Chemical mapping of a 177-nucleotide RNA with DMS and 2A3. For DMS, 9,051 sequencing reads were counted. Values cover nucleotides 27 to 126. It was measured as part of the RMDB library M2PK90. The reactions ran in a buffer of 150 mM KOAc, 10 mM MgCl2 and 150 mM bicine (pH 8.5), at 24 C.
RNA sequence: GGGAACGACUCGAGUAGAGUCGAAAAUCUAUCACCAGCCCAUGUUUACGACACGAAAGGGCUGUUGCAAAUUACGUAUAGCUCUUGCAACAUCGUGUCGAAACGUUCCCAAGCUAUACGCCACAAAUCAGAAUACUUGAUUCGUCAAGUAUUCUGAAAAAGAAACAACAACAACAAC
Reactivity to DMS in 0.01 (KOAc 150mM, MgCl2 10mM, bicine 150mM(pH8.5), 24C), signal-to-noise 7, nucleotides 027 to 126: u010c060u000a100u010c060a080c070c030a050g010c030c010c010a180u010g010u000u000u010a130c020g020a030c000a020c000g010a040a120a080g010g010g020c110u000g010u000u000g000c040a020a020a120u010u000a080c040g010u000a000u000a010g000c000u000c200u000u000g000c050a020a020c030a050u000c010g020u000g010u010c010g010a030a070a180c030g010u000u000c010c000c000a130a040g000c010u000a010u000a020c000g010c160c180a080c190a060a060a100
Reactivity to 2A3 in 0.01 (KOAc 150mM, MgCl2 10mM, bicine 150mM(pH8.5), 24C), signal-to-noise 7, nucleotides 027 to 126: u010c010u020a100u100c030a020c090c010a000g020c010c010c000a030u070g050u090u130u060a060c010g010a000c010a000c020g060a130a080a070g120g040g000c050u010g000u010u000g000c010a000a040a090u190u110a070c020g000u010a010u000a020g000c010u020c020u160u060g030c020a020a010c000a050u020c020g010u010g020u030c010g020a070a050a010c020g000u000u000c000c000c000a000a000g010c000u000a000u010a030c010g030c020c010a110c020a030a060a050